[RMDB]
RNA sequence: GGGAACGACUCGAGUAGAGUCGAAAAUUACAAGAUUGUUAACAGACACUUGGCAACUUAUGCAGACUGGGAAAAUGAAGUGUGGCAGUCAUAUCAUAGGGACCUAUUAGUUACCAGAGUUGAUGCCCAUGGGUGUGAUACCAUUGCCCGCUGUAGCCUCAAGACCUCUAUUCGUAGAGGUCUUGAGAAAAGAAACAACAACAACAAC
Reactivity to DMS in 0.01 (KOAc 150mM, MgCl2 10mM, bicine 150mM(pH8.5), 24C), signal-to-noise 1, nucleotides 027 to 156: u020u020a180c120a130a110g000a170u000u020g070u000u010a120a170c050a100g000a080c040a050c090u000u000g020g030c040a090a070c000u000u000a130u000g080c000a060g020a030c060u000g000g040g010a020a090a060a160u020g010a070a110g040u000g010u000g040g020c000a040g010u000c070a110u010a120u010c050a170u020a100g000g000g010a030c000c000u000a070u020u000a060g010u000u000a060c080c020a150g000a090g050u010u000g040a090u000g000c050c000c010a090u000g090g000g000u010g030u000g010a050u020a020c020c020a080u010u000g010c010c000c010g000c000u010g000u020a120g020c200
Reactivity to 2A3 in 0.01 (KOAc 150mM, MgCl2 10mM, bicine 150mM(pH8.5), 24C), signal-to-noise 2, nucleotides 027 to 156: u180u110a020c000a080a040g110a190u130u090g040u080u060a170a030c050a040g040a010c020a020c040u030u030g060g000c010a040a100c120u170u130a070u180g000c000a000g060a030c100u210g010g000g030a010a070a070a110u050g040a160a110g040u050g020u090g050g000c020a040g070u020c000a020u040a020u090c070a070u110a080g010g010g020a010c030c070u070a080u300u220a090g020u060u050a080c030c000a040g010a000g060u020u020g040a050u040g020c000c000c020a030u020g000g000g050u050g030u060g070a020u010a160c000c000a040u020u090g040c000c000c000g000c000u000g030u100a070g010c000